The record gives the reactivity of an RNA of 207 nucleotides to 2A3. It was measured as part of the RMDB library RSTRND. Values cover nucleotides 27 to 156.
RNA sequence: GGGAACGACUCGAGUAGAGUCGAAAAUAAGUUCAGUUGAGCCUGAAUUUUAAGUGAUACUAUCUAGCUUAGAAUUUGGUCAUUUUUGAUAGUGUAGAUUGAAAUUUGACAAAUUUUAAUUGAAAUUAAAGUCUUAGUCUAGCUUGAAAUUUUGGAAGAUGUAGAAUUUGUUCGCAAAUUCUACAUCAAAAGAAACAACAACAACAAC
Reactivity to 2A3 in 0.01 (KOAc 150mM, MgCl2 10mM, bicine 150mM(pH8.5), 24C), signal-to-noise 1, nucleotides 027 to 156: u180a050a000g000u010u010c050a010g030u080u060g100a010g110c020c010u020g050a050a010u050u000u000u000a000a000g000u000g030a010u010a090c000u000a000u000c000u000a010g030c010u000u000a000g000a030a010u090u060u130g040g010u090c050a190u050u050u170u270u230g000a000u000a000g020u000g000u010a020g010a000u000u010g000a000a000a030u020u000u020g000a010c010a030a040a010u000u020u030u060a010a030u000u000g000a000a020a040u140u170a220a170a030g010u000c000u020u130a070g010u040c030u030a030g010c050u040u010g090a100a210a270u260u180u130u020g080g000a150a090